[RMDB]
RNA sequence: GGGAACGACUCGAGUAGAGUCGAAAAGCUAAGCGGUGACGCUUAGCAACAAGUAAGCGUGAGCUUACUUGAAGGCAAGCGUGAGCUUGCCAAGUUCGAUCUUCGGAUCGAACAACCAAUCGUUCGCGAUUGGACUUAGCGCGUGAGCGCUAAGAACCUAUCGCGUGAGCGAUAGGAGUAUGUACGUGAGUACAUACACUACGUCUACGGACGUAGAGGACUACGUUCGCGUAGUCCAACAGCCUCUCACAGCUUCCUCGUGAGGUACGAAUCCAUUCGUGGAUUCGAAAAGAAACAACAACAACAAC
Reactivity to 2A3 in 0.01 (KOAc 150mM, MgCl2 10mM, bicine 150mM(pH8.5), 24C), signal-to-noise 9, nucleotides 027 to 266: g000c000u000a000a000g000c000g030g070u100g050a040c010g000c000u000u000a000g000c000a000a010c000a000a000g000u000a000a000g000c040g040u130g140a020g010c000u000u000a000c000u000u010g080a080a040g000g000c000a000a000g000c010g040u110g060a020g010c000u000u000g000c000c000a000a010g000u000u000c000g000a010u000c010u030u080c270g120g000a000u000c000g000a000a000c000a000a020c000c000a010a010u000c000g030u050u050c240g020c010g090a000u000u010g000g010a030c000u000u000a000g000c000g010c020g050u110g110a070g020c000g000c000u000a000a000g000a010a020c000c000u000a000u010c000g000c030g020u070g030a030g000c000g000a000u010a010g010g030a080g000u000a000u000g010u000a000c030g080u070g130a050g010u000a000c000a000u000a000c020a010c010u000a000c000g000u000c000u010a060c300g130g000a000c000g000u000a010g040a090g040g000a000c000u000a000c000g020u020u040c100g010c010g110u000a000g000u000c000c000a000a020c030a000g010c010c010u080c000u010c020a020c020a050g030c040u220u110c040c060u120c070g020u010g010a000g010g010u040a050
Reactivity to DMS in 0.01 (KOAc 150mM, MgCl2 10mM, bicine 150mM(pH8.5), 24C), signal-to-noise 9, nucleotides 027 to 266: g010c010u000a010a010g010c000g010g000u020g010a160c000g020c000u000u000a010g010c010a120a150c010a010a010g000u000a000a010g010c000g000u020g000a210g010c000u000u000a000c000u000u000g000a190a140g010g010c010a010a020g010c000g020u010g000a180g010c010u000u000g010c010c010a030a040g010u000u000c000g000a010u000c000u000u020c220g020g000a010u000c000g000a000a000c000a150a240c010c010a020a010u000c000g010u000u020c170g030c010g010a010u000u000g000g010a150c000u000u000a000g010c000g020c000g000u030g000a260g010c010g000c000u000a000a000g000a250a220c000c000u000a000u000c000g010c000g000u010g000a120g010c000g000a010u000a010g000g000a160g010u000a000u000g010u010a010c000g000u020g000a220g010u000a000c000a000u000a000c000a300c010u000a000c000g000u000c000u000a140c190g020g010a010c000g010u000a000g000a170g010g010a020c000u000a010c000g020u010u020c180g020c010g020u000a000g000u010c010c010a060a050c240a060g000c050c030u000c000u000c020a030c030a220g000c080u000u000c120c100u000c150g010u000g000a020g000g020u020a090